The record gives the reactivity of an RNA of 207 nucleotides to DMS and 2A3. In probing experiments dimethyl sulfate is read out at A N1 and C N3, which are open when not base-paired. Reactivities are given for positions 27 through 156. The reactions ran in a buffer of 150 mM KOAc, 10 mM MgCl2 and 150 mM bicine (pH 8.5), at 24 C. 2A3 adducts were read by reverse transcription with SuperScript II with manganese.
RNA sequence: GGGAACGACUCGAGUAGAGUCGAAAAGAAUCACCGUACCUAUUUAGGUUUACGCUCCAAGUUCGGUGGAUAGCAGCCCUAUCAAUAUCUAGGAGAACUGUGCUAUGUUUAGAAGAUUAGGUAGUCUAUUACACAGCCAUGUUCGCAUGGCUGUGAAGGUUAUUUCGUACUUCGGUACGAAAUAACCAAAAGAAACAACAACAACAAC
Reactivity to DMS in 0.01 (KOAc 150mM, MgCl2 10mM, bicine 150mM(pH8.5), 24C), signal-to-noise 2, nucleotides 027 to 156: g000a100a100u000c000a180c020c000g000u000a050c010c010u000a150u000u020u000a090g030g030u000u000u000a070c090g000c030u000c020c050a040a090g000u000u000c000g000g000u000g000g030a100u010a120g000c050a180g000c100c040c030u010a150u000c030a080a090u000a120u000c040u000a130g000g020a140g020a060a080c060u000g000u000g010c010u000a040u000g010u010u000u000a090g030a080a120g020a120u010u010a040g000g040u000a080g010u000c040u000a130u010u000a250c000a000c030a010g010c010c000a010u010g000u000u000c300g040c000a000u000g000g000c000u020g010u000g020a000a020
Reactivity to 2A3 in 0.01 (KOAc 150mM, MgCl2 10mM, bicine 150mM(pH8.5), 24C), signal-to-noise 3, nucleotides 027 to 156: g000a020a060u090c040a020c020c000g010u040a030c000c000u040a110u210u210u220a020g060g000u100u110u090a100c100g000c060u030c010c000a010a020g050u030u060c030g010g020u020g030g020a030u020a030g050c040a010g010c000c000c000u050a070u080c070a080a160u040a010u150c010u030a010g020g010a070g020a090a020c020u080g050u070g060c010u090a010u160g050u030u070u050a140g040a100a020g000a070u080u040a050g100g000u040a040g040u010c020u000a120u100u120a040c020a000c000a000g020c000c000a000u000g000u000u040c090g010c080a010u000g000g000c010u000g000u000g000a010a000